Source: RMDB library OK2TST, as collected in RNAgym. Structure probing data (DMS) for a 177-nucleotide construct. For DMS, 871 sequencing reads were counted.
[RMDB]
RNA sequence: GGGAACGACUCGAGUAGAGUCGAAAACGUUGAGUUGACGGAAGGUAUGGCCUGGGUCGCCGAUCGAUGAUCCCGGCACCGCUCCGACGAUGUCCAGCUUGGGUGCCUACUCGGCACAUACUUCAGAGUGAGUCCGAGUGUUCGCACUCGGACUCACAAAAGAAACAACAACAACAAC
Reactivity to DMS in 0.01 (KOAc 150mM, MgCl2 10mM, bicine 150mM(pH8.5), 24C), signal-to-noise 1, nucleotides 027 to 126: c060g030u010u000g010a210g000u000u000g000a200c030g010g020a070a050g000g010u000a140u010g000g000c010c000u000g010g000g020u000c000g070c040c080g000a090u020c030g000a080u010g000a030u010c000c000c070g010g000c010a150c020c010g000c100u000c000c010g000a110c070g000a090u010g020u020c070c120a070g020c130u000u040g020g030g030u000g020c000c020u010a090c080u000c090g000g000c000a060c030a070u030a030c140u000u000c190a090g000a180